[RMDB]
RNA sequence: GGGAACGACUCGAGUAGAGUCGAAAAGAUAUGGAAAUGCAAAUCUCGUUUCGGAGCGAUAAGCGUUAGGUCGGAAACGACCUUACGCUUUUGACGCUCUUCGACGAGAUUUGCAUUUCCUAAGUCAUCGACUGGAAUAGUUCGCUAUUCCAGUCGAAAAAGAAACAACAACAACAAC
Reactivity to DMS in 0.01 (KOAc 150mM, MgCl2 10mM, bicine 150mM(pH8.5), 24C), signal-to-noise 1, nucleotides 027 to 126: g020a060u000a300u000g010g000a000a050a020u010g000c000a000a000a020u000c000u000c000g000u000u000u000c270g000g020a010g000c000g000a100u000a030a010g020c000g020u010u000a000g010g020u000c000g000g000a100a110a230c000g040a020c000c000u000u000a000c020g050c000u000u000u010u000g010a170c060g000c000u000c010u000u000c270g010a000c000g000a000g000a000u000u000u000g020c000a000u000u000u000c010c000u000a020a080g000u010c030a170